[RMDB]
RNA sequence: GGGAACGACUCGAGUAGAGUCGAAAAGAAAAGACAGCCGUGCCUGUCGCACGAAAAAGAAAACAGAGCGAUCUCUCUGGAUCGAAAAAGAAAUCCUUGCAAUCCAAGGUGAUUGAAAAGAAAGAAAGGGUAAGAUUCAGUUCGCUGAAUCUUACCCAAAAGAAACAACAACAACAAC
Reactivity to DMS in 0.01 (KOAc 150mM, MgCl2 10mM, bicine 150mM(pH8.5), 24C), signal-to-noise 2, nucleotides 027 to 126: g000a060a020a080a200g000a110c030a010g040c070c110g010u000g000c030c030u010g020u000c100g040c050a030c030g030a020a050a080a030a060g020a080a000a070a140c120a040g000a130g020c230g020a120u080c080u000c050u020c020u010g000g010a290u000c030g030a040a070a040a130a030g010a000a090a110u010c000c000u000u000g000c090a100a020u020c050c000a130a040g000g000u010g010a020u000u000g020a050a030a090a130g020a060a060a170g000a140a180a110
Reactivity to 2A3 in 0.01 (KOAc 150mM, MgCl2 10mM, bicine 150mM(pH8.5), 24C), signal-to-noise 2, nucleotides 027 to 126: g010a000a010a010a010g080a030c040a030g000c000c010g150u100g020c000c000u020g110u230c060g000c040a070c000g050a070a000a000a000a020g220a000a070a000a000c060a000g060a000g090c040g090a060u040c070u000c000u000c000u270g000g000a010u000c050g150a050a100a000a000a000g200a020a040a000u060c000c000u030u040g020c000a020a000u000c010c000a030a000g100g000u080g050a000u000u010g050a090a120a170a000g070a040a140a020g090a000a160a000